Chemical mapping of a 177-nucleotide RNA with DMS and 2A3. It was measured as part of the RMDB library TTRDES. For DMS the reverse transcriptase was MarathonRT. For 2A3, 40,841 sequencing reads were counted.
RNA sequence: GGGAACGACUCGAGUAGAGUCGAAAAGAUAUGGAUCAUGUGAAGGCAACAGCCAUUGGAUCGGAAACGAUCCACGGUGGACAUGCCUUACAUGAUCCUAAGUCAAACCUGCGCUUCGGCGCAGGAACAAUGAAGUACUCUUCGGAGUACUUCAUUGAAAAGAAACAACAACAACAAC
Reactivity to DMS in 0.01 (KOAc 150mM, MgCl2 10mM, bicine 150mM(pH8.5), 24C), signal-to-noise 9, nucleotides 027 to 126: g000a020u000a170u020g000g000a000u000c000a000u000g010u000g010a030a010g030g020c010a100a090c220a300g010c000c000a040u010u000g010g010a010u000c000g010g010a050a030a080c000g010a010u000c000c010a010c300g010g010u000g000g010a080c130a300u010g010c000c000u000u000a020c000a000u000g010a010u000c000c000u000a000a040g000u000c010a080a100a190c010c000u000g010c000g020c000u000u020c210g030g000c000g010c000a000g000g000a070a110
Reactivity to 2A3 in 0.01 (KOAc 150mM, MgCl2 10mM, bicine 150mM(pH8.5), 24C), signal-to-noise 9, nucleotides 027 to 126: g010a000u030a010u080g010g000a010u000c010a010u010g030u100g300a060a020g060g000c140a300a070c090a300g030c020c000a030u050u130g000g000a000u000c000g000g010a020a030a000c000g010a000u000c000c000a000c050g090g030u030g000g020a030c130a300u300g000c000c000u000u000a000c000a000u010g000a000u000c000c000u000a000a000g000u000c010a070a060a130c000c000u010g000c000g000c000u070u140c300g190g000c000g000c000a000g000g000a000a010